[RMDB]
Background
An RNA of 177 nucleotides, treated with 2A3 and read out base by base. It was measured as part of the RMDB library OK1LIB. The reactions ran in a buffer of 150 mM KOAc, 10 mM MgCl2 and 150 mM bicine (pH 8.5), at 24 C. For 2A3 the reverse transcriptase was SuperScript II with manganese.

RNA sequence: GGGAACGACUCGAGUAGAGUCGAAAAGACGAGUUCGUAACAGAUCACCCAUCGAGGUCAAAGGCAUCUAAAAUGGACGGGAAUUAAUCCAACUACCGAUACCAUAGAACACGUGGUUUUGCGUGAAGACGCUCAUGCCUUUCGAGGCAUGAGCGUCAAAAGAAACAACAACAACAAC
Reactivity to 2A3 in 0.01 (KOAc 150mM, MgCl2 10mM, bicine 150mM(pH8.5), 24C), signal-to-noise 1, nucleotides 027 to 126: g000a000c040g000a010g090u100u170c040g000u000a120a000c000a050g000a070u070c000a050c000c000c000a000u050c000g020a000g000g150u150c100a030a030a030g010g100c000a040u070c070u140a000a000a260a150u070g000g000a000c000g000g000g140a000a140u270u000a160a000u080c030c000a000a010c080u050a270c000c000g070a050u000a120c000c000a040u000a100g140a000a160c000a000c020g000u000g000g140u240u120u180u260g000c000g050u110g100a260a100